[RMDB]
RNA sequence: GGGAACGACUCGAGUAGAGUCGAAAAUUUCCGUUCGCGGAAAAGAUUCUCCUAAGUCGUAGCGUUGAAACCGUUUACAGGCUAUGAAGUAUCGGAAACGAUAUGGAGCCUGGGACGGUGGAGCUACGAUAUGGAUGCUAACCCAUUUCGAUGGGAAGAUAGUGAAACGUUUCGACGUUUCACUAUCAAAAGAAACAACAACAACAAC
Reactivity to DMS in 0.01 (KOAc 150mM, MgCl2 10mM, bicine 150mM(pH8.5), 24C), signal-to-noise 2, nucleotides 027 to 156: u000u000u000c000c000g000u000u000c210g020c020g020g000a040a040a070a190g000a210u000u000c070u000c010c030u000a090a300g030u010c000g060u000a010g020c020g000u000u020g010a200a160a070c030c010g020u000u010u000a160c010a030g000g050c000u020a140u000g000a130a280g000u000a000u000c000g000g010a190a130a300c010g010a020u000a010u000g010g000a030g020c000c000u000g000g000g020a020c000g000g010u000g000g010a170g000c000u000a020c030g030a000u000a040u000g010g010a140u000g010c040u030a080a120c000c010c000a160u010u000u000c300g030a090u000g010g030g000a110a230
Reactivity to 2A3 in 0.01 (KOAc 150mM, MgCl2 10mM, bicine 150mM(pH8.5), 24C), signal-to-noise 5, nucleotides 027 to 156: u010u000u000c000c000g000u040u070c300g000c020g070g080a000a020a000a010g140a080u130u050c050u010c050c010u090a170a060g020u000c000g000u020a000g000c010g070u120u040g030a000a000a020c000c010g000u000u020u120a270c020a010g000g000c000u030a300u300g020a030a000g010u000a010u000c010g010g050a170a020a050c010g010a000u000a000u010g050g020a000g010c000c010u010g000g020g000a000c000g000g040u010g000g010a010g000c000u000a000c000g000a010u000a010u020g020g000a040u130g070c070u090a110a150c010c000c020a010u060u130u110c240g110a040u050g040g010g020a040a050